[RMDB]
RNA sequence: GGGAACGACUCGAGUAGAGUCGAAAAGAGCACGUUACCUUCUCCCUCGUUUAAAAAGGAUGUGGGGUCACCUAUCGCGUCAAAAAUCCGGAGGUGGUAGUGGCGGAGGAUUUGUUAAGGGAGAAGGGUGCUCGACCUAAUUCGUUAGGUCGAGCACAAAAGAAACAACAACAACAAC
Reactivity to 2A3 in 0.01 (KOAc 150mM, MgCl2 10mM, bicine 150mM(pH8.5), 24C), signal-to-noise 1, nucleotides 027 to 126: g020a010g000c030a010c170g030u070u110a060c010c000u000u000c000u000c000c000c040u080c030g050u020u080u170a170a180a050a010a030g090g000a060u030g050u110g080g020g000g050u050c050a030c000c030u090a150u190c010g000c020g080u040c040a010a120a150a050a090u020c010c050g020g020a020g010g110u080g040g000u100a040g060u010g000g000c070g000g040a080g120g000a030u070u130u240g100u100u190a030a000g020g010g000a000g010a000a000g030g000
Reactivity to DMS in 0.01 (KOAc 150mM, MgCl2 10mM, bicine 150mM(pH8.5), 24C), signal-to-noise 2, nucleotides 027 to 126: g000a090g010c030a040c090g000u000u000a300c010c000u000u000c000u000c000c000c020u000c060g020u000u020u020a040a090a060a090a060g020g010a070u020g030u000g000g020g010g000u000c050a020c070c040u000a080u000c050g000c030g020u030c080a010a040a040a070a090u010c140c070g020g020a060g000g010u010g040g020u010a040g020u000g010g010c060g020g000a170g000g010a100u020u000u000g010u010u000a110a040g010g000g000a020g010a030a020g000g020
This 177-nucleotide RNA was probed chemically with 2A3 and DMS. The RNA was probed in 150 mM KOAc, 10 mM MgCl2 and 150 mM bicine (pH 8.5) at 24 C. DMS adducts were read by reverse transcription with MarathonRT. For DMS, 1,261 sequencing reads were counted. DMS (dimethyl sulfate) methylates the pairing face of unpaired adenines and cytosines.